[RMDB]
RNA sequence: GGGAACGACUCGAGUAGAGUCGAAAAAAGGUUAUUGCAUCCCUUGGGCCCAGCUGCAAUACAGAGGGAUCCAUUGCUCAGAUGAUCCGUCACGGAGCAGAUGCGUUCCGCAUCGUUAUGGCCAAGGGCUUGCGUGAGAUUUCGAUCUCACGCAAGCAAAAGAAACAACAACAACAAC
Reactivity to DMS in 0.01 (KOAc 150mM, MgCl2 10mM, bicine 150mM(pH8.5), 24C), signal-to-noise 2, nucleotides 027 to 126: a040a090g000g010u000u000a050u000u000g030c040a150u020c040c000c000u010u010g010g010g020c050c010c080a080g010c080u000g010c010a070a080u010a090c100a100g030a070g010g010g020a010u000c160c050a020u000u000g040c120u000c190a070g020a050u000g000a030u000c050c060g000u000c020a190c190g040g000a100g000c020a100g000a050u000g000c130g010u000u020c090c050g020c030a010u010c070g010u010u000a060u000g010g030c000c020a080a030g020g000
Reactivity to 2A3 in 0.01 (KOAc 150mM, MgCl2 10mM, bicine 150mM(pH8.5), 24C), signal-to-noise 2, nucleotides 027 to 126: a000a000g130g000u190u040a110u070u080g040c020a050u060c010c000c000u010u010g080g010g040c000c020c000a040g020c000u040g010c030a000a100u030a060c050a040g060a010g010g010g000a020u000c060c040a030u000u050g040c040u110c150a050g000a240u070g010a080u000c060c130g070u020c040a010c150g040g030a020g010c040a010g020a080u000g030c000g010u200u010c090c060g000c030a010u050c040g000u100u080a100u130g000g000c010c010a010a030g010g000